The record gives the reactivity of an RNA of 177 nucleotides to 2A3 and DMS. High 2A3 reactivity points to a flexible backbone, as in loops and unpaired stretches. The DMS profile rests on 953 reads. Reactivities are given for positions 27 through 126.

[RMDB]
RNA sequence: GGGAACGACUCGAGUAGAGUCGAAAACAAAUUGUCUUGCGUAAUUCUAAUGGUGCUUGCAUUUGGAACGCUGCUGCAUAUAUGAAACUCUCGGAUGCACUUAAACGACAGAUUCGCAUUGCAUGCCCCCUUCCUCUAACUUCGGUUAGAGGAAGGGAAAAGAAACAACAACAACAAC
Reactivity to 2A3 in 0.01 (KOAc 150mM, MgCl2 10mM, bicine 150mM(pH8.5), 24C), signal-to-noise 2, nucleotides 027 to 126: c000a000a090a060u070u060g040u040c030u030u030g010c020g080u110a090a140u100u010c030u120a120a040u110g000g020u090g050c060u030u050g000c000a010u100u010u020g070g010a040a010c060g000c040u070g010c030u060g000c040a010u030a000u010a020u200g040a080a060a030c060u030c010u020c020g040g050a040u030g030c030a060c050u110u160a080a090a000c000g060a010c020a060g030a110u020u020c020g000c050a020u000u050g000c020a020u090g020c030c000
Reactivity to DMS in 0.01 (KOAc 150mM, MgCl2 10mM, bicine 150mM(pH8.5), 24C), signal-to-noise 2, nucleotides 027 to 126: c090a030a050a130u020u010g010u000c010u010u020g000c040g010u000a050a100u010u000c060u000a080a130u010g020g030u000g020c100u000u010g000c040a070u010u000u000g010g010a100a070c070g000c040u000g020c040u000g020c050a050u000a110u010a090u000g010a100a110a080c110u000c030u010c020g050g000a180u010g010c130a020c160u000u000a040a160a150c070g000a050c070a060g000a120u010u000c040g000c020a030u010u000g000c040a050u010g040c070c090